Overview:
An RNA of 177 nucleotides, treated with 2A3 and DMS and read out base by base. DMS adducts were read by reverse transcription with MarathonRT.
[RMDB]
RNA sequence: GGGAACGACUCGAGUAGAGUCGAAAAACUGAGUAUCUACGGAUACUCAGAACGGCAGUGAUCGAAUUAUCAUGAGCCAAUCCUUUUCUGAACACUGUGAGGAUUCAUAUGAUAGGUCUGAGCCAAAUGUUAGUAAAGAAUUCGUUCUUUACUAACAAAAAGAAACAACAACAACAAC
Reactivity to 2A3 in 0.01 (KOAc 150mM, MgCl2 10mM, bicine 150mM(pH8.5), 24C), signal-to-noise 9, nucleotides 027 to 126: a000c000u000g000a000g000u000a000u000c000u010a030c250g110g000a000u000a000c000u000c000a000g010a060a020c040g010g000c010a100g110u010g070a010u020c050g080a110a160u180u030a010u070c030a010u020g050a010g090c060c040a010a020u020c000c000u040u050u100u090c070u100g140a220a080c150a080c160u120g050u050g050a010g000g020a020u030u020c020a040u060a020u240g020a020u020a020g010g010u000c020u040g040a020g010c000c000a030a080a040
Reactivity to DMS in 0.01 (KOAc 150mM, MgCl2 10mM, bicine 150mM(pH8.5), 24C), signal-to-noise 9, nucleotides 027 to 126: a130c000u000g010a010g010u000a000u000c000u000a130c200g030g000a010u000a000c000u000c000a000g000a050a080c170g000g020c010a150g010u000g000a010u000c030g010a110a080u030u010a020u000c050a010u000g000a090g010c200c170a050a040u000c010c000u000u010u020u020c080u010g010a110a100c230a100c170u020g010u000g000a030g000g000a020u000u000c030a080u020a010u000g000a030u000a060g010g000u000c010u000g010a300g010c010c020a070a080a080
2A3 adducts were read by reverse transcription with SuperScript II with manganese.